This 207-nucleotide RNA was probed chemically with 2A3. Conditions: 150 mM KOAc, 10 mM MgCl2 and 150 mM bicine (pH 8.5), 24 C. 2A3 is a SHAPE reagent: it acylates the 2'-hydroxyl of flexible nucleotides of all four kinds. The 2A3 profile rests on 580 reads.
[RMDB]
RNA sequence: GGGAACGACUCGAGUAGAGUCGAAAAAGGGAAUCUUCCGCAAUGGACGAAAGUCUGACGGAGCAACGCCGCGUGUAUGAAGAAGGUUUUCGGAUCGUAAAGUACUGUUGUUAGAGAAGAACAAGGAUAAGAGUAACUGCUUGUCCCUUGACGGUAUACACUUGACUUUGUUCGCAAAGUCAAGUGUAAAAGAAACAACAACAACAAC
Reactivity to 2A3 in 0.01 (KOAc 150mM, MgCl2 10mM, bicine 150mM(pH8.5), 24C), signal-to-noise 1, nucleotides 027 to 156: a000g150g020g050a100a050u030c000u060u010c020c000g000c070a090a060u070g030g000a000c000g070a100a000a040g030u010c010u020g050a050c020g000g000a030g000c030a010a040c120g060c020c020g000c070g030u110g020u060a060u080g000a020a140g000a020a130g150g000u040u010u110u150c080g000g050a060u040c020g080u090a040a000a130g000u050a100c040u020g010u030u000g000u010u050a110g000a020g040a130a000g040a070a010c040a030a020g010g000a010u010a040a010g000a010g030u040a020a000c060u100g060c040u040u010g020u110c140c020c010u000u070g020a010c010g040g050u110a000u000